[RMDB]
RNA sequence: GGGAACGACUCGAGUAGAGUCGAAAAUGAUGAAGUUACACAACGUUAUUCCAACAAAGGUUGGUAUUAAUCCGCUUGGUUAUGAUUGGACGAUCCUGGGGAAGAAAAUGCAUGCUAAGGGCACCAACCCAAGCAUUGAGUUCGCUCAAUGCUUGGGAAAAGAAACAACAACAACAAC
Reactivity to 2A3 in 0.01 (KOAc 150mM, MgCl2 10mM, bicine 150mM(pH8.5), 24C), signal-to-noise 1, nucleotides 027 to 126: u170g060a020u030g000a030a030g010u040u120a080c070a010c000a080a080c030g000u010u030a080u140u060c030c000a030a010c010a060a300a010g300g030u040u050g040g020u070a100u080u150a060a070u070c000c070g040c140u040u050g060g000u130u070a110u090g030a050u030u080g050g020a000c030g030a030u040c010c030u030g000g020g000g000a000a120g040a030a160a000a000u150g020c000a010u010g000c010u090a030a060g020g070g000c010a010c040c000a050a030
Reactivity to DMS in 0.01 (KOAc 150mM, MgCl2 10mM, bicine 150mM(pH8.5), 24C), signal-to-noise 2, nucleotides 027 to 126: u000g010a090u010g000a090a130g000u010u000a090c120a140c070a050a080c070g000u000u000a130u000u000c020c010a010a040c060a100a090a050g020g010u000u000g000g000u010a070u020u000a120a040u030c100c050g000c070u020u000g000g000u010u000a070u000g010a120u010u000g000g000a050c060g020a060u000c060c030u010g010g010g010g010a100a100g000a090a030a050a080u000g010c060a000u000g020c130u000a030a090g000g000g020c060a080c070c060a040a140
This 177-nucleotide RNA was probed chemically with 2A3 and DMS. Reactivities are given for positions 27 through 126. The reactions ran in a buffer of 150 mM KOAc, 10 mM MgCl2 and 150 mM bicine (pH 8.5), at 24 C. For DMS, 1,146 sequencing reads were counted.